An RNA of 177 nucleotides, treated with 2A3 and read out base by base.
RNA sequence: GGGAACGACUCGAGUAGAGUCGAAAACUUGCAUUCUGGGACAGCCAAGUCUGUGACUUGCACGUACUCCCCUGCCCUCAACAAGAUGUUUUGCCAACUGGCCAAGACCUGCCCUGUGCAGCUGUGGGUACCUGAGGCGCUUCGGCGCCUCAGGUACAAAAGAAACAACAACAACAAC
Reactivity to 2A3 in 0.01 (KOAc 150mM, MgCl2 10mM, bicine 150mM(pH8.5), 24C), signal-to-noise 1, nucleotides 027 to 126: c020u010u000g020c000a070u040u100c030u000g060g000g070a160c100a120g160c000c000a120a000g020u050c030u090g160u110g110a040c040u000u030g000c030a000c110g000u020a050c040u030c010c000c000c000u010g000c000c000c000u060c020a000a160c040a030a030g040a000u160g130u000u200u080u000g090c100c090a120a080c090u000g000g000c000c000a050a000g090a070c000c000u000g110c000c000c000u020g050u160g000c050a060g020c050u000g010u050g260g010
The RNA was probed in 150 mM KOAc, 10 mM MgCl2 and 150 mM bicine (pH 8.5) at 24 C.